[RMDB]
RNA sequence: GGGAACGACUCGAGUAGAGUCGAAAAGUUGACCGGUUCGCCGGUCAACAAAGAAAGCGGAAAGCACGAGGAAAGGGAGGUGCGGGCCGCAACCACCCAUAAAAACGAGAUCCUUCGGGAUCUCGAAGUCUUAUAUUGGCUUCGGCCAAUAUAAGACAAAAGAAACAACAACAACAAC
Reactivity to DMS in 0.01 (KOAc 150mM, MgCl2 10mM, bicine 150mM(pH8.5), 24C), signal-to-noise 3, nucleotides 027 to 126: g020u000u010g010a000c000c000g000g000u010u000c260g020c010c000g020g010u010c000a030a010c000a040a090a120g020a080a100a130g020c010g010g000a040a050a220g010c010a010c010g010a220g030g010a090a120a130g010g000g010a140g020g000u000g020c020g020g000g030c010c010g010c000a020a040c100c090a130c010c020c000a140u030a050a040a060a080a110c010g010a010g000a000u000c000c000u000u000c210g050g000g010a010u000c000u000c000g000a020a040
Reactivity to 2A3 in 0.01 (KOAc 150mM, MgCl2 10mM, bicine 150mM(pH8.5), 24C), signal-to-noise 3, nucleotides 027 to 126: g000u000u000g000a010c000c020g020g000u050u050c170g010c070c000g000g000u010c010a000a000c000a000a000a000g040a010a050a010g010c010g010g030a040a040a000g020c020a000c040g070a120g100g170a200a100a090g120g060g030a210g180g000u030g010c000g010g070g050c010c010g010c010a000a000c020c020a040c000c000c010a100u210a060a100a010a000a010c000g000a000g000a010u000c000c000u050u080c180g060g000g000a010u010c000u000c000g000a010a000
Background
An RNA of 177 nucleotides, treated with DMS and 2A3 and read out base by base. It was measured as part of the RMDB library M2PK50. Conditions: 150 mM KOAc, 10 mM MgCl2 and 150 mM bicine (pH 8.5), 24 C. 2A3 adducts were read by reverse transcription with SuperScript II with manganese. For DMS the reverse transcriptase was MarathonRT. For DMS, 1,900 sequencing reads were counted.